[RMDB]
RNA sequence: GGGAACGACUCGAGUAGAGUCGAAAAUCGGUGAAGAUGCCGGUUACCCGCUACGGGACGAAAAGACCCCGUGAACCUUUACUAUAGCUUCGCAUUGGUAUUGGAUAAUUAAUGUGUAGGAUAGGUCAUAGUUUUAAUUCUUCGGAAUUAAAACUAUAAAAGAAACAACAACAACAAC
Reactivity to DMS in 0.01 (KOAc 150mM, MgCl2 10mM, bicine 150mM(pH8.5), 24C), signal-to-noise 9, nucleotides 027 to 126: u000c010g000g010u000g010a140a150g010a140u020g020c000c010g000g010u000u000a170c000c010c000g010c210u020a020c020g000g000g010a120c050g010a120a080a150a140g010a130c100c010c010c000g010u000g010a120a110c100c050u010u010u020a100c020u010a030u010a090g010c040u010u010c060g010c010a060u000u000g000g000u000a050u010u020g020g000a170u040a050a040u010u010a030a030u010g000u000g010u000a020g000g010a040u010a020g000g000u020c130
Reactivity to 2A3 in 0.01 (KOAc 150mM, MgCl2 10mM, bicine 150mM(pH8.5), 24C), signal-to-noise 9, nucleotides 027 to 126: u010c000g000g020u060g080a210a130g110a270u300g040c000c010g000g010u010u040a080c000c000c000g000c020u040a010c000g000g010g030a010c040g120a070a080a100a070g120a120c030c000c000c000g000u020g030a050a060c020c020u080u170u180a060c020u040a020u050a100g160c010u050u050c030g000c010a020u010u020g030g020u080a080u090u220g150g030a080u120a190a010u110u030a020a010u040g010u010g040u060a010g010g030a030u020a030g010g030u060c030

The record gives the reactivity of an RNA of 177 nucleotides to DMS and 2A3. The RNA was probed in 150 mM KOAc, 10 mM MgCl2 and 150 mM bicine (pH 8.5) at 24 C. Reactivities are given for positions 27 through 126.